[RMDB]
RNA sequence: GGGAACGACUCGAGUAGAGUCGAAAAGAUCUAACCGUGCUUGUCCGGGUUUCGCGACGCUCGAACGCCGUUUACUUUCACAGUCCGUUCGUUGUCGACGAAACCUGCAUAUCGCACGGCCGCAAGCCCAUAACGUGAACUUCGGUUCACGUUAUGGAAAAGAAACAACAACAACAAC
Reactivity to 2A3 in 0.01 (KOAc 150mM, MgCl2 10mM, bicine 150mM(pH8.5), 24C), signal-to-noise 3, nucleotides 027 to 126: g070a030u050c030u110a030a050c000c000g000u000g000c000u060u040g030u020c050c000g040g010g040u000u000u000c000g020c000g000a010c010g050c110u030c010g000a010a000c010g030c050c000g040u110u090u140a050c030u060u240u280c150a110c040a100g020u030c020c020g010u010u000c000g020u020u080g000u000c010g160a300c000g000a030a000a000c000c010u000g000c000a020u030a010u070c040g000c000a000c000g000g000c010c000g060c030a030a050g040c000
Reactivity to DMS in 0.01 (KOAc 150mM, MgCl2 10mM, bicine 150mM(pH8.5), 24C), signal-to-noise 3, nucleotides 027 to 126: g000a170u000c050u020a130a230c000c010g010u000g030c030u000u000g010u020c140c010g010g000g010u010u010u000c000g020c000g000a030c030g040c160u000c000g000a020a010c030g030c240c130g000u000u000u010a080c120u000u000u020c190a080c180a040g010u000c090c010g000u000u000c000g020u000u000g010u000c000g010a100c010g020a010a000a020c010c010u000g020c290a050u000a030u000c200g010c010a020c000g010g000c050c140g020c160a080a110g000c140